[RMDB]
RNA sequence: GGGAACGACUCGAGUAGAGUCGAAAACGCCAGUUUAGAAACACCGACGUUACUCGACUUCUGUAAGAUCCCAGUGACGGAUAGCUCAGCGUAACGGGCCACGUCUUUAAUCUGGUGACCGUUAACAGAUACGCAUUAUGUUCGCAUAAUGCGUAUCAAAAGAAACAACAACAACAAC
Reactivity to DMS in 0.01 (KOAc 150mM, MgCl2 10mM, bicine 150mM(pH8.5), 24C), signal-to-noise 7, nucleotides 027 to 126: c090g010c020c020a030g000u000u010u010a060g000a100a080a090c090a080c180c140g010a050c010g000u000u000a040c060u000c020g000a060c030u000u000c030u000g020u010a080a130g000a090u010c010c020c020a110g000u000g000a040c040g000g020a050u010a040g020c080u000c030a110g040c170g010u010a030a030c020g010g000g010c040c090a100c190g010u000c050u010u010u010a040a050u010c050u000g020g010u000g000a270c010c010g010u010u010a050a070c240a110
Reactivity to 2A3 in 0.01 (KOAc 150mM, MgCl2 10mM, bicine 150mM(pH8.5), 24C), signal-to-noise 4, nucleotides 027 to 126: c020g010c010c020a030g000u020u030u080a100g030a050a110a010c030a020c040c040g070a040c020g030u010u030a030c010u020c030g030a020c000u090u040c010u070g040u050a050a060g040a120u050c040c010c030a040g050u060g080a020c030g010g040a060u100a070g020c030u000c070a020g000c020g070u040a040a020c000g000g030g020c010c020a050c050g020u010c000u010u080u020a040a050u030c010u010g000g010u020g090a040c020c000g060u070u100a070a030c010a050

This 177-nucleotide RNA was probed chemically with DMS and 2A3. DMS (dimethyl sulfate) methylates the pairing face of unpaired adenines and cytosines. It was measured as part of the RMDB library OK2TST. The reactions ran in a buffer of 150 mM KOAc, 10 mM MgCl2 and 150 mM bicine (pH 8.5), at 24 C. For 2A3, 9,096 sequencing reads were counted.